[RMDB]
RNA sequence: GGGAACGACUCGAGUAGAGUCGAAAAAGGAAAACCUAAAUUUAGAAAGAGAGGGCUAACACCUAAUACCUUUUCUGUUAGAAAUGAUGUAAUUCCUAGUGGAUUAUGUAGGUUUAGAAGAGAUGAUAACACAUUUAAAGUAUCUGUAAUAGGAUACCAUGUUAGUGCUUUUCGAAGCACUAACAUGAAAAGAAACAACAACAACAAC
Reactivity to DMS in 0.01 (KOAc 150mM, MgCl2 10mM, bicine 150mM(pH8.5), 24C), signal-to-noise 3, nucleotides 027 to 156: a090g030g010a090a050a090a110c030c010u010a040a050a130u000u000u000a120g000a090a050a060g000a110g010a070g000g010g010c030u010a050a090c080a100c020c040u010a060a150u000a080c030c000u000u000u000u000c010u000g010u010u000a060g010a040a070a080u000g000a110u000g020u000a050a050u000u000c010c010u000a070g030u000g030g010a040u000u000a000u000g010u000a040g020g020u000u000u000a070g010a100a110g000a090g010a060u000g000a110u000a040a110c080a060c060a110u000u000u000a050a060a130g000u000a000u000c000u010g010u000a110a170u010a300g010g000a010u000a010c010
Reactivity to 2A3 in 0.01 (KOAc 150mM, MgCl2 10mM, bicine 150mM(pH8.5), 24C), signal-to-noise 4, nucleotides 027 to 156: a010g060g020a020a040a000a000c020c010u050a100a100a180u130u150u090a040g040a020a080a000g050a000g000a020g010g000g000c040u050a060a010c030a050c070c020u040a070a040u100a150c010c000u050u030u040u040c010u010g050u040u040a040g040a080a070a040u110g030a050u100g030u050a020a030u030u050c020c000u020a080g040u110g210g010a020u030u020a020u120g040u030a020g040g000u020u030u050a030g010a080a010g040a030g010a050u080g030a040u160a200a020c050a010c030a070u110u160u130a110a130a010g000u000a000u000c010u020g030u030a010a110u020a110g000g020a000u000a010c000